Chemical mapping of a 207-nucleotide RNA with DMS and 2A3. DMS adducts were read by reverse transcription with MarathonRT. Reactivities are given for positions 27 through 156.

[RMDB]
RNA sequence: GGGAACGACUCGAGUAGAGUCGAAAAGAAAGAAAGAAAGCUGACCCUUCUGCUGACGGAUCUUGUGGAGCCCCACAGUGCAGAAGGGGAGAGAAGCUUUAAUGCCGACCGUCUGGGCAGCCUUGAAAAAACGGAUUCUUCUUCGGAAGAAUCCGAACAUUGUUAUUGAGUUCGCUCAAUAACAAUGAAAAGAAACAACAACAACAAC
Reactivity to DMS in 0.01 (KOAc 150mM, MgCl2 10mM, bicine 150mM(pH8.5), 24C), signal-to-noise 2, nucleotides 027 to 156: g000a130a080a150g020a120a090a140g000a050a030a040g030c010u000g020a110c020c000c010u000u000c000u000g010c010u010g000a230c130g000g020a110u010c040u020u010g010u000g010g000a050g000c010c010c000c010a030c020a060g000u000g020c020a010g010a040a020g020g020g000g000a030g030a100g040a100a050g000c010u000u000u000a080a070u010g000c000c040g040a100c010c030g010u010c050u040g030g010g010c010a090g000c040c060u010u000g000a010a040a080a120a120a220c010g000g000a020u000u000c000u000u000c000u000u020c300g010g020a020a020g000a030a010u000c000c000g020a010a060
Reactivity to 2A3 in 0.01 (KOAc 150mM, MgCl2 10mM, bicine 150mM(pH8.5), 24C), signal-to-noise 2, nucleotides 027 to 156: g030a010a060a010g050a020a090a020g050a060a060a000g000c030u090g120a100c000c000c000u000u000c000u010g010c030u050g010a040c060g030g040a090u090c070u120u110g010u040g020g060a150g080c180c000c000c020a000c010a030g080u050g040c000a000g000a000a000g010g000g010g000a000g000a000g000a030a000g000c000u030u020u040a100a050u100g010c020c010g040a080c020c020g020u010c020u080g020g000g020c010a010g000c020c020u060u080g040a080a060a020a020a030a010c010g000g000a000u000u010c000u000u000c000u000u030c100g040g000a000a000g000a000a000u000c000c000g000a010a000

The DMS profile rests on 4,491 reads. It was measured as part of the RMDB library M2RFPK.